[RMDB]
RNA sequence: GGGAACGACUCGAGUAGAGUCGAAAACAGUUGCAGUAAUUGCUGGAGUUGCUGGUGCUCGCAUUCCAGACGUACCUACUACAUUGGCUUGGGUGAACAAUCAGAUAAUUUUCUUUGUUUCUCGAGUGGUAUACCAAAAGUUCGCUUUUGGUAUACCAAAAGAAACAACAACAACAAC
Reactivity to 2A3 in 0.01 (KOAc 150mM, MgCl2 10mM, bicine 150mM(pH8.5), 24C), signal-to-noise 2, nucleotides 027 to 126: c020a000g080u110u100g020c010a000g030u110a130a110u110u080g030c010u040g000g040a020g030u060u040g000c020u050g060g100u070g050c020u020c000g020c020a050u070u010c000c000a000g000a020c020g030u030a060c010c010u050a020c000u000a010c020a110u070u000g040g010c000u020u040g030g020g030u070g020a040a010c020a010a060u110c000a020g050a090u070a120a170u210u150u100u050c020u000u010u020g010u000u000u000c020u010c010g040a040g050u070
Reactivity to DMS in 0.01 (KOAc 150mM, MgCl2 10mM, bicine 150mM(pH8.5), 24C), signal-to-noise 1, nucleotides 027 to 126: c080a110g000u000u000g000c040a070g020u010a070a040u000u000g010c010u020g020g010a080g000u010u020g010c030u000g010g000u000g000c050u000c060g000c040a100u000u000c010c010a050g010a140c060g000u000a070c110c020u010a110c060u000a060c090a040u000u000g000g000c060u010u000g000g000g030u010g000a050a060c030a040a140u010c100a040g000a100u030a050a070u020u010u000u010c090u010u000u000g010u000u000u000c010u010c100g000a210g020u000